Structure probing data (DMS and 2A3) for a 170-nucleotide construct. DMS adducts were read by reverse transcription with MarathonRT. The reactions ran in a buffer of 150 mM KOAc, 10 mM MgCl2 and 150 mM bicine (pH 8.5), at 24 C. It was measured as part of the RMDB library 15KLIB.

RNA sequence: GGGAACGACUCGAGUAGAGUCGAAAAUCCCCCGCCAUCCCCUGACGGAGAAAACUGGUCCCGAUAGGGGCACCCACAAUAGGAUGGCAGGAGGGGACUGCGGGUCCGUCGUUCCAUCCUUUUCUUACCACCGUGAUGUUCGCAUCACGGAAAAGAAACAACAACAACAAC
Reactivity to DMS in 0.01 (KOAc 150mM, MgCl2 10mM, bicine 150mM(pH8.5), 24C), signal-to-noise 5, nucleotides 027 to 129: u000c040c010c030c030c000g040c000c020a080u010c000c020c050c040u010g000a140c150g000g040a130g000a060a030a060a040c180u000g040g050u050c040c000c000g000a060u090a120g000g000g000g000c030a030c050c010c030a110c140a140a090u070a070g050g000a020u030g020g020c070a040g030g020a050g000g010g020g000a000c040u040g070c120g040g030g020u030c020c030g040u030c050g070u010u040c020c020a010u000c080c020u030u060u010u020c060u030u040a040c150c170a090
Reactivity to 2A3 in 0.01 (KOAc 150mM, MgCl2 10mM, bicine 150mM(pH8.5), 24C), signal-to-noise 9, nucleotides 027 to 129: u010c000c000c000c000c010g010c000c000a090u020c010c010c000c040u030g020a040c070g050g010a060g090a090a120a030a050c130u120g050g020u040c000c000c000g090a120u210a290g000g000g000g000c000a010c000c000c000a090c020a060a100u090a130g010g020a010u020g000g010c010a020g040g030a090g020g030g010g000a020c030u060g010c070g030g070g070u020c030c010g030u020c020g070u050u000c010c000a040u090c020c030u060u080u030u050c020u050u060a110c040c050a070